The data come from the RNA Mapping Database (RMDB), library TTRINS. Structure probing data (DMS and 2A3) for a 177-nucleotide construct. Values cover nucleotides 27 to 126.
[RMDB]
RNA sequence: GGGAACGACUCGAGUAGAGUCGAAAAGAUAUGGACUCUGAACUACUGCUAGUAGCUGGCUGAUGACCGUCUUUUCGUCGGAAACGACGAAAAGACGCAAGGCCCGAAAGCAGCAGAGUCCUAAGUCCAUAAUGAAAGUCUUCGGACUUUCAUUAUGAAAAGAAACAACAACAACAAC
Reactivity to DMS in 0.01 (KOAc 150mM, MgCl2 10mM, bicine 150mM(pH8.5), 24C), signal-to-noise 3, nucleotides 027 to 126: g000a110u010a300u010g010g000a030c010u010c000u000g000a110a070c070u020a300c010u010g000c020u020a110g020u030a150g010c170u020g010g000c010u000g000a160u020g000a140c300c010g000u000c000u040u010u000u000c000g040u000c000g000g000a060a090a270c010g020a030c000g010a010a000a000a000g000a000c000g020c030a020a120g010g020c010c000c010g020a050a120a140g010c010a000g010c000a010g000a040g000u000c000c000u000a010a100g000u000c030
Reactivity to 2A3 in 0.01 (KOAc 150mM, MgCl2 10mM, bicine 150mM(pH8.5), 24C), signal-to-noise 3, nucleotides 027 to 126: g060a060u120a060u280g010g000a010c010u000c000u040g030a110a100c120u300a050c020u300g010c020u030a040g070u040a030g200c150u080g020g000c010u040g060a300u230g070a150c050c050g000u050c000u030u000u000u000c010g030u000c010g040g060a110a060a090c020g020a000c000g000a010a010a010a000g010a010c000g000c010a010a100g000g000c020c020c020g100a070a030a000g010c000a000g070c020a000g000a010g010u000c010c000u010a010a000g010u040c000
For DMS, 3,059 sequencing reads were counted. The RNA was probed in 150 mM KOAc, 10 mM MgCl2 and 150 mM bicine (pH 8.5) at 24 C. The 2A3 profile rests on 4,700 reads.